The data come from the RNA Mapping Database (RMDB), library OK2TST. This 177-nucleotide RNA was probed chemically with 2A3 and DMS. Values cover nucleotides 27 to 126.

[RMDB]
RNA sequence: GGGAACGACUCGAGUAGAGUCGAAAACGAGGUGCUCCGGGCGGCCACCGAACUGGACAGUCCACUGGCUCGGCUGGGGUACGCCGACGAGCUGCUCGGCAUCUUCGACGACGUGGCGGCGGAGCUGGAGUCUGAAGUACUUCGGUACUUCAGACUCAAAAGAAACAACAACAACAAC
Reactivity to 2A3 in 0.01 (KOAc 150mM, MgCl2 10mM, bicine 150mM(pH8.5), 24C), signal-to-noise 1, nucleotides 027 to 126: c030g030a050g050g070u070g030c000u020c000c000g150g300g190c060g210g050c000c000a030c000c020g010a100a030c020u040g040g090a070c010a060g060u050c020c010a070c100u040g040g000c030u010c020g010g000c080u050g050g020g040g110u160a130c110g000c000c000g040a020c010g000a000g060c010u010g050c030u060c080g020g050c000a030u030c000u120u040c050g220a280c000g000a050c050g000u030g000g000c000g000g040c000g010g040a020g000c000u030g080
Reactivity to DMS in 0.01 (KOAc 150mM, MgCl2 10mM, bicine 150mM(pH8.5), 24C), signal-to-noise 1, nucleotides 027 to 126: c060g020a110g020g020u000g000c010u000c000c070g020g020g060c000g010g000c040c000a040c110c040g010a120a040c050u000g010g020a060c090a090g000u000c020c090a140c160u000g000g000c020u010c000g010g000c090u000g000g050g030g040u000a000c170g000c000c000g000a040c040g000a050g020c000u000g000c100u000c110g000g010c110a150u000c010u000u000c090g000a120c110g000a170c190g000u010g000g000c040g020g010c000g000g000a060g010c050u000g000